The data come from the RNA Mapping Database (RMDB), library VIROID. This 177-nucleotide RNA was probed chemically with 2A3 and DMS. For DMS, 5,604 sequencing reads were counted. For DMS the reverse transcriptase was MarathonRT. For 2A3 the reverse transcriptase was SuperScript II with manganese.
[RMDB]
RNA sequence: GGGAACGACUCGAGUAGAGUCGAAAAGAGGAUCGGCUGGGAAGAGUAGAUCCUAUGGGAAUCCCUGGCUACCCCUAAUGUCCAGCCCCUCCCCGGUCCGAGCGAAGGGGGACUCCGGGAUCCCUUGCUAUACUGAGUAGUUCGCUACUCAGUAUAGAAAAGAAACAACAACAACAAC
Reactivity to 2A3 in 0.01 (KOAc 150mM, MgCl2 10mM, bicine 150mM(pH8.5), 24C), signal-to-noise 2, nucleotides 027 to 126: g130a020g010g000a030u030c050g020g010c020u040g060g070g090a100a070g040a070g100u060a020g000a040u040c020c000u060a160u120g000g000g010a070a210u050c010c000c020u030g000g020c010u030a060c000c010c000c000u050a160a080u170g060u050c030c010a020g010c050c000c000c000u020c000c010c010c020g020g020u010c030c030g050a060g040c060g050a060a030g000g000g000g020g010a020c010u010c020c010g000g000g010a000u000c000c000c010u010u030g000
Reactivity to DMS in 0.01 (KOAc 150mM, MgCl2 10mM, bicine 150mM(pH8.5), 24C), signal-to-noise 4, nucleotides 027 to 126: g000a070g010g010a020u010c050g010g010c030u000g010g010g010a110a140g000a060g010u000a090g000a040u000c010c010u000a060u010g000g000g000a070a080u000c010c000c000u010g020g010c090u000a280c010c000c000c030u010a100a130u000g000u000c020c030a090g000c010c010c020c040u000c010c010c010c060g000g010u000c060c040g000a070g010c060g010a160a060g000g000g000g000g010a090c220u000c010c010g000g010g000a060u000c010c000c000u000u020g010